[RMDB]
The record gives the reactivity of an RNA of 177 nucleotides to DMS.

RNA sequence: GGGAACGACUCGAGUAGAGUCGAAAACGGACGGGAUUUUAGCCGGGUUGCAGGUUUACCCAUUUCGUGCUGGGUCCUGGACCCAAUUAAGAUGAUAGAAAUAUUAUCGAUUUCUUUACCGUCCGGACAGGAUGAUUAGCUUCGGCUAAUCAUCCUGAAAAGAAACAACAACAACAAC
Reactivity to DMS in 0.01 (KOAc 150mM, MgCl2 10mM, bicine 150mM(pH8.5), 24C), signal-to-noise 1, nucleotides 027 to 126: c020g020g010a000c000g000g010g000a060u000u020u000u010a020g000c300c280g010g010g030u000u000g000c000a020g000g010u010u040u000a070c000c000c000a050u000u010u000c240g040u010g020c270u000g000g000g020u000c000c020u000g000g000a040c000c000c000a040a070u010u000a030a140g000a000u000g000a050u000a040g000a080a050a060u000a030u010u000a060u000c050g010a110u000u010u000c020u010u000u010a250c000c000g010u010c020c000g000g020a100
Notes:
The RNA was probed in 150 mM KOAc, 10 mM MgCl2 and 150 mM bicine (pH 8.5) at 24 C.